[RMDB]
Chemical mapping of a 177-nucleotide RNA with DMS.
RNA sequence: GGGAACGACUCGAGUAGAGUCGAAAAUCUAUCAAAUUCGUUUGAUAGAAAACCCGCCGUAGGCACCAAGAUCGAGCUACGGACAUGUAAGAGUGCAAAUAAACAGCCCCCCAUUCGUGGGGGGCAAUAACCAUGUUGUUUUCGAACAACAUGGUUAAAAAGAAACAACAACAACAAC
Reactivity to DMS in 0.01 (KOAc 150mM, MgCl2 10mM, bicine 150mM(pH8.5), 24C), signal-to-noise 1, nucleotides 027 to 126: u000c000u000a030u000c000a010a030a050u000u020c140g050u010u000u000g000a010u000a020g000a020a080a070a210c000c000c020g030c050c010g020u000a010g040g000c100a090c080c130a090a130g000a070u000c150g010a080g010c020u000a000c000g000g000a060c090a060u000g010u000a060a100g000a140g000u000g000c200a060a050a130u010a080a120a140c160a190g000c000c030c000c000c000c000a010u010u000c230g040u000g000g050g050g030g000g000c000a000a000
For DMS, 861 sequencing reads were counted.